[RMDB]
Source: RMDB library OK3TST, as collected in RNAgym.
Chemical mapping of a 207-nucleotide RNA with 2A3 and DMS.
Values cover nucleotides 27 to 156.
For 2A3, 3,034 sequencing reads were counted.
The RNA was probed in 150 mM KOAc, 10 mM MgCl2 and 150 mM bicine (pH 8.5) at 24 C.
RNA sequence: GGGAACGACUCGAGUAGAGUCGAAAAAGCGUGUGCGACGACAGCAGCCGCCACACCAGCCACUCCUCCAGCCAUGACUCCAGCAGCAGCUACGACAGCGGGAGCGACUCCUCCAGCUACUCGUCCGGGGGCUGUGACUGAUGGCGGUCGAUAAGGGAAGUCGUUAUACAUUCGUGUAUAACGACUUAAAAGAAACAACAACAACAAC
Reactivity to 2A3 in 0.01 (KOAc 150mM, MgCl2 10mM, bicine 150mM(pH8.5), 24C), signal-to-noise 3, nucleotides 027 to 156: a000g080c070g020u090g020u030g040c050g000a060c050g020a030c100a060g010c030a010g010c020c000g020c020c000a030c010a050c020c010a000g020c010c010a050c030u030c000c000u000c000c020a020g010c050c020a150u150g040a180c040u060c060c030a020g010c010a000g010c000a000g000c040u050a030c040g040a020c000a020g010c010g020g000g000a010g000c030g090a060c040u040c000c000u020c010c010a000g000c000u030a070c040u060c040g020u010c070c050g010g000g000g000g000c060u010g000u010g020a010c020u010g030a070u020g020g030c030g000g000u050c030g020a060u070a140a030g010g050g050
Reactivity to DMS in 0.01 (KOAc 150mM, MgCl2 10mM, bicine 150mM(pH8.5), 24C), signal-to-noise 2, nucleotides 027 to 156: a050g040c040g010u000g040u000g030c020g020a060c050g010a140c040a160g030c080a150g020c010c010g040c010c020a050c010a080c050c010a060g000c020c020a040c010u000c010c020u000c020c010a150g010c040c020a080u000g000a080c030u000c020c030a170g040c040a090g000c050a080g010c040u000a050c040g030a100c070a080g020c010g000g000g010a060g010c040g020a090c050u000c070c020u000c020c000a070g010c000u000a050c040u000c020g010u000c040c020g030g010g000g000g020c080u000g040u000g020a040c010u010g010a050u000g000g010c020g000g020u010c020g000a080u010a050a060g010g000g020
2A3 is a SHAPE reagent: it acylates the 2'-hydroxyl of flexible nucleotides of all four kinds.